[RMDB]
RNA sequence: GGGAACGACUCGAGUAGAGUCGAAAAGAUAUGGACGUACACUGGAGUUGGUCGGAAACGAUCCAACGUUGAAAGUGACGUCCUAAGUCAAAACAAGUAGACGGUACUUCGGUACCGUCUACUUGAACUGAUAAUUGCAGUUCGCUGCAAUUAUCAGAAAAGAAACAACAACAACAAC
Reactivity to DMS in 0.01 (KOAc 150mM, MgCl2 10mM, bicine 150mM(pH8.5), 24C), signal-to-noise 4, nucleotides 027 to 126: g000a040u000a300u010g000g010a000c000g010u000a090c010a010c010u000g010g000a100g010u000u000g000g030u010c010g000g000a120a070a210c000g000a010u010c010c010a010a000c000g010u000u020g030a100a130a020g000u000g000a060c000g000u010c000c000u000a000a050g010u000c020a090a070a120a250c000a010a010g000u000a000g000a020c000g010g000u010a010c000u000u000c200g040g020u000a000c000c000g010u000c000u010a000c000u000u010g010a040a180